Background:
The record gives the reactivity of an RNA of 207 nucleotides to 2A3. The RNA was probed in 150 mM KOAc, 10 mM MgCl2 and 150 mM bicine (pH 8.5) at 24 C. Source: RMDB library VIROID, as collected in RNAgym.

RNA sequence: GGGAACGACUCGAGUAGAGUCGAAAACGGCACGAGGAUGUGCCUGAUUUUGAAUGGGGGAGGAUGUCACGGACAAAUUCCGUGACCAUGUUAGGCCUCAUUGAAGAGCGUACCUAGCUGCGUUUCAACCUGCGUGGGUUGAGGCGACUUAGCAGAUAUCUACGGUUUACUUCGGUAAACCGUAGAUAAAAGAAACAACAACAACAAC
Reactivity to 2A3 in 0.01 (KOAc 150mM, MgCl2 10mM, bicine 150mM(pH8.5), 24C), signal-to-noise 2, nucleotides 027 to 156: c020g000g000c000a000c050g120a180g280g130a200u260g000u000g000c000c000u000g080a080u010u070u060u080g060a100a090u010g000g000g030g020g010a030g030g110a020u020g020u010c000a000c000g000g010a010c010a040a110a110u170u000c010c000g000u010g000a000c000c000a010u080g140u050u020a110g000g120c020c000u050c020a000u000u150g060a090a040g010a010g020c060g000u080a040c010c000u010a020g030c010u020g020c010g000u020u000u000c000a010a000c000c000u210g070c150g160u300g030g000g000u000u000g000a010g010g010c010g080a120c020u080u030a010g000c030a050g020a130u040